[RMDB]
Source information: An RNA of 170 nucleotides, treated with DMS and 2A3 and read out base by base. The reactions ran in a buffer of 150 mM KOAc, 10 mM MgCl2 and 150 mM bicine (pH 8.5), at 24 C. The 2A3 profile rests on 6,598 reads. The data come from the RNA Mapping Database (RMDB), library 15KLIB. DMS adducts were read by reverse transcription with MarathonRT.
RNA sequence: GGGAACGACUCGAGUAGAGUCGAAAAUCCGGAGUUCCUCUUCUUCCUCUCGGCUGAGGUUCUUCCCCCCUCCGGCCAGUUGCUUCUUCUUGUUCUCGAGGGCCUUCCUUCUUCUGUGGUCCCGCCUGUAGGUUAGGCUUCGGCCUAACCAAAAGAAACAACAACAACAAC
Reactivity to DMS in 0.01 (KOAc 150mM, MgCl2 10mM, bicine 150mM(pH8.5), 24C), signal-to-noise 4, nucleotides 027 to 129: u050c000c000g040g030a110g050u040u020c020c040u000c050u030u030c100u020u030c040c000u030c020u030c090g030g060c080u030g030a120g030g040u010u010c090u010u030c020c030c010c040c030c010u020c020c060g000g050c060c040a090g020u000u020g040c030u050u030c030u020u000c040u100u040g000u020u020c050u020c060g000a090g040g060g000c040c070u010u020c050c030u000u020c040u000u000c040u020g020u020g070g040u020c020c010c000g030c020c060u050g030u040a110
Reactivity to 2A3 in 0.01 (KOAc 150mM, MgCl2 10mM, bicine 150mM(pH8.5), 24C), signal-to-noise 3, nucleotides 027 to 129: u030c000c010g010g000a070g020u040u010c000c010u020c000u020u040c020u080u030c000c000u010c000u010c010g060g000c070u040g030a010g040g000u060u020c040u050u040c010c000c000c000c000c000u000c000c000g000g000c000c030a030g010u040u030g060c000u000u030c000u040u020c010u040u110g070u100u000c010u000c040g040a090g000g020g020c000c020u050u030c010c000u010u040c000u010u010c020u020g090u050g010g030u000c000c000c000g040c000c010u090g040u070a060